The record gives the reactivity of an RNA of 177 nucleotides to DMS and 2A3. The 2A3 profile rests on 39,251 reads. The RNA was probed in 150 mM KOAc, 10 mM MgCl2 and 150 mM bicine (pH 8.5) at 24 C. The data come from the RNA Mapping Database (RMDB), library OK1LIB.

[RMDB]
RNA sequence: GGGAACGACUCGAGUAGAGUCGAAAAGAAAAUAAGUGCGUAAUCGCGUCUUGACGUGAGUGAGCCCACACGAAAAGCUAUCCCAAGUGGGAUAGCAUAGCUCACAAUACGCUAAGAUUCGUGUGAAAAUUAUAGUGCUAUUCGUAGCACUAUAAUUAAAAGAAACAACAACAACAAC
Reactivity to DMS in 0.01 (KOAc 150mM, MgCl2 10mM, bicine 150mM(pH8.5), 24C), signal-to-noise 9, nucleotides 027 to 126: g010a110a080a090a100u040a070a080g020u010g000c030g020u010a070a300u010c010g000c000g010u000c040u040u020g010a020c000g020u000g000a090g000u000g010a030g010c020c300c030a020c050a030c050g010a030a030a090a120g010c000u000a000u000c000c000c000a300a180g030u060g000g000g000a000u000a000g010c000a020u010a030g010c000u000c010a020c050a100a100u010a010c010g020c000u000a050a060g020a120u010u010c000g010u000g010u000g010a150a070
Reactivity to 2A3 in 0.01 (KOAc 150mM, MgCl2 10mM, bicine 150mM(pH8.5), 24C), signal-to-noise 9, nucleotides 027 to 126: g090a000a080a020a050u280a110a040g060u060g060c010g020u040a040a060u040c010g000c000g030u020c070u110u230g130a030c000g000u010g010a020g000u010g000a000g010c020c050c000a020c000a000c010g030a020a030a020a020g000c000u000a000u020c000c000c010a180a160g220u300g100g000g000a000u000a000g000c000a000u010a000g000c000u010c000a020c000a010a090u070a040c010g000c010u020a050a030g050a140u030u020c010g000u010g000u000g030a100a080